Chemical mapping of a 177-nucleotide RNA with DMS and 2A3. The reactions ran in a buffer of 150 mM KOAc, 10 mM MgCl2 and 150 mM bicine (pH 8.5), at 24 C. Source: RMDB library TTRDES, as collected in RNAgym. For 2A3, 2,812 sequencing reads were counted. DMS adducts were read by reverse transcription with MarathonRT.
[RMDB]
RNA sequence: GGGAACGACUCGAGUAGAGUCGAAAAGAUAUGGAUACCAUCCAAGAUCAUCGAUCAGUUCUCGGAAACGAGAACUGGGAGAUUGGAUAAGGUAUCCUAAGUCAAACCCAUGCCUUCGGGCAUGGGACGUGAUGGUUGUGUUCGCACAACCAUCACGAAAAGAAACAACAACAACAAC
Reactivity to DMS in 0.01 (KOAc 150mM, MgCl2 10mM, bicine 150mM(pH8.5), 24C), signal-to-noise 1, nucleotides 027 to 126: g020a020u000a300u000g040g000a020u000a000c000c000a090u040c010c000a120a130g000a300u000c130a300u000c110g010a300u050c000a020g010u000u000c000u000c000g040g000a050a030a140c000g030a020g000a000a010c000u000g000g020g000a110g020a030u000u000g010g010a060u000a080a110g010g000u000a030u010c000c030u000a050a050g000u000c000a110a150a150c010c000c000a000u000g000c000c000u000u020c210g040g000g010c020a000u000g000g000g030a000
Reactivity to 2A3 in 0.01 (KOAc 150mM, MgCl2 10mM, bicine 150mM(pH8.5), 24C), signal-to-noise 2, nucleotides 027 to 126: g040a000u040a020u110g020g000a000u000a020c000c000a010u010c020c020a070a130g230a300u110c060a030u300c040g030a010u030c020a000g000u010u000c000u020c000g010g000a060a050a000c000g000a000g000a000a000c000u000g000g030g000a040g030a010u010u100g000g020a020u020a300a300g010g000u000a000u000c000c000u000a030a010g030u000c030a060a010a270c000c010c010a000u000g000c000c000u090u140c300g180g050g000c010a010u000g010g000g000a060